[RMDB]
RNA sequence: GGGAACGACUCGAGUAGAGUCGAAAAGAUAUGGAGCUUGAUACUGUGCGACGAAGUAGCAUCGGAAACGAUGCUACAGAGCACUGUAUCAAGAGCUCCUAAGUCAAAAGCCAGACUUCGGUCUGGCGUCCUGUAGGAAGUUCGCUUCCUACAGGACAAAAGAAACAACAACAACAAC
Reactivity to 2A3 in 0.01 (KOAc 150mM, MgCl2 10mM, bicine 150mM(pH8.5), 24C), signal-to-noise 8, nucleotides 027 to 126: g040a010u080a050u190g000g000a000g010c020u050u060g040a000u010a020c020u070g020u020g050c090g250a300c030g030a300a010g010u010a000g000c010a010u000c000g020g000a060a050a020c010g000a000u000g000c000u000a000c000a000g000a000g000c000a000c010u000g000u000a010u000c000a000a010g030a010g010c000u000c000c000u010a120a030g050u030c040a070a080a150a120g000c000c000a000g000a010c000u060u190c300g100g000u000c000u000g000g010c010
Reactivity to DMS in 0.01 (KOAc 150mM, MgCl2 10mM, bicine 150mM(pH8.5), 24C), signal-to-noise 9, nucleotides 027 to 126: g010a060u010a300u010g000g000a010g010c010u010u000g010a010u000a000c000u000g010u000g010c000g000a210c250g000a100a090g000u000a000g000c010a000u000c000g000g000a110a070a180c000g020a010u000g000c000u000a000c000a010g000a120g010c000a000c000u000g000u000a000u000c000a080a060g000a080g010c000u000c000c000u000a030a100g000u010c040a090a090a110a240g010c000c000a010g000a020c000u000u010c280g030g000u000c000u000g000g000c000
Source: RMDB library TTRDES, as collected in RNAgym. Structure probing data (2A3 and DMS) for a 177-nucleotide construct. For DMS, 21,891 sequencing reads were counted. 2A3 adducts were read by reverse transcription with SuperScript II with manganese. The reactions ran in a buffer of 150 mM KOAc, 10 mM MgCl2 and 150 mM bicine (pH 8.5), at 24 C.